[RMDB]
The data come from the RNA Mapping Database (RMDB), library OK2TST. Structure probing data (DMS and 2A3) for a 177-nucleotide construct. For 2A3 the reverse transcriptase was SuperScript II with manganese. DMS adducts were read by reverse transcription with MarathonRT. In probing experiments dimethyl sulfate is read out at A N1 and C N3, which are open when not base-paired. Reactivities are given for positions 27 through 126.
RNA sequence: GGGAACGACUCGAGUAGAGUCGAAAACGGCGCCGGCGCGUCGGCUGGGCCGAUGAAAGUGGCUCCGACCUGCGGAUCUACCGCUUCGACGGGUCGGCGUCGACGGGGCGCAGCGUCGGCACGAGAAGGUCCAUUAUUAUUUCGAUAAUAAUGGACCAAAAGAAACAACAACAACAAC
Reactivity to DMS in 0.01 (KOAc 150mM, MgCl2 10mM, bicine 150mM(pH8.5), 24C), signal-to-noise 6, nucleotides 027 to 126: c030g010g000c030g010c000c000g000g010c020g010c010g010u000c020g010g010c020u000g010g000g010c000c000g010a080u010g010a060a130a130g020u000g010g010c010u000c000c030g000a040c040c060u000g000c010g000g020a260u020c230u000a170c030c020g000c050u000u000c030g010a050c010g010g010g020u000c020g000g000c030g020u000c000g000a040c060g010g000g000g000c040g020c040a070g000c040g000u010c020g000g000c040a050c060g000a110g010a130a100
Reactivity to 2A3 in 0.01 (KOAc 150mM, MgCl2 10mM, bicine 150mM(pH8.5), 24C), signal-to-noise 7, nucleotides 027 to 126: c020g000g000c010g000c020c000g010g020c110g020c010g070u030c010g000g000c020u070g010g040g020c000c050g000a010u120g130a050a110a030g140u130g050g000c020u000c050c110g300a300c060c070u030g000c010g020g000a050u080c050u210a240c040c010g000c000u030u030c020g040a040c010g020g040g090u040c010g000g000c000g000u010c010g000a000c000g000g000g000g010c040g000c030a030g000c000g030u030c010g020g000c030a010c070g080a090g030a110a050